[RMDB]
RNA sequence: GGGAACGACUCGAGUAGAGUCGAAAAGGGCUCCACGGAAAUACGGUGCCGGAUAACGUCCGGCGGGGGCGACCCCAGGGAAAGUGCCACAGAGAGCAAACCGCCAUGCCUUGCAUGGUAAGGGUGAGUAGACUAGUUACUUCGGUAACUAGUCUACAAAAGAAACAACAACAACAAC
Reactivity to DMS in 0.01 (KOAc 150mM, MgCl2 10mM, bicine 150mM(pH8.5), 24C), signal-to-noise 1, nucleotides 027 to 126: g020g000g000c030u040c010c030a050c140g000g000a070a080a110u040a040c100g040g000u010g000c020c000g000g000a050u000a150a110c090g050u000c000c000g000g000c000g000g010g020g010g030c150g000a210c060c010c040c060a110g030g000g000a050a020a080g020u000g030c000c030a070c090a060g010a060g000a040g000c010a030a150a080c040c000g000c000c000a020u000g020c030c240u000u030g000c010a000u000g000g040u000a060a060g000g000g000u010g000a160